[RMDB]
RNA sequence: GGGAACGACUCGAGUAGAGUCGAAAAAUGGUCAAAGCGCGACGUAAAUUGCGAAUUGCGCCAAUCGUAUACGCUAAUGGGAAUUCUAGUGAUGGCACGUGCGUUUUCGUCGAAUCGCACCAAUUUAGGCAGCGCUUCGCUUAAACGUCUUAGGUAAAUGUGGAAGAUAUUUCGAUAUCUUCCACAUAAAAGAAACAACAACAACAAC
Reactivity to DMS in 0.01 (KOAc 150mM, MgCl2 10mM, bicine 150mM(pH8.5), 24C), signal-to-noise 3, nucleotides 027 to 156: a070u010g000g000u000c040a080a110a100g020c030g010c020g010a060c030g050u000a040a050a090u000u000g000c090g000a050a200u000u000g030c010g020c010c030a060a150u000c060g030u000a150u000a050c040g000c020u000a080a110u010g000g030g000a110a140u010u000c050u000a090g030u010g000a110u000g010g000c030a080c050g030u020g000c000g020u000u000u000u000c040g010u010c040g010a020a030u000c010g030c010a200c020c020a060a170u000u000u000a150g030g040c040a130g020c020g000c140u000u000c030g000c030u000u000a020a040a030c030g010u000c070u000u000a060g020g010u010a060a100
Reactivity to 2A3 in 0.01 (KOAc 150mM, MgCl2 10mM, bicine 150mM(pH8.5), 24C), signal-to-noise 5, nucleotides 027 to 156: a000u050g000g010u040c040a020a040a070g030c020g020c020g030a030c020g050u120a090a160a150u150u130g000c010g040a030a110u070u110g020c020g000c010c000a020a060u100c030g010u090a050u010a120c060g000c060u050a070a070u090g020g020g060a040a050u180u050c030u060a060g020u030g100a090u030g020g000c020a010c100g040u070g000c020g000u020u000u000u040c090g090u050c020g020a010a010u010c010g000c010a010c000c000a040a040u090u190u210a120g030g000c060a070g000c070g000c010u000u010c000g000c000u010u030a020a010a000c000g030u020c050u060u100a050g060g010u070a100a140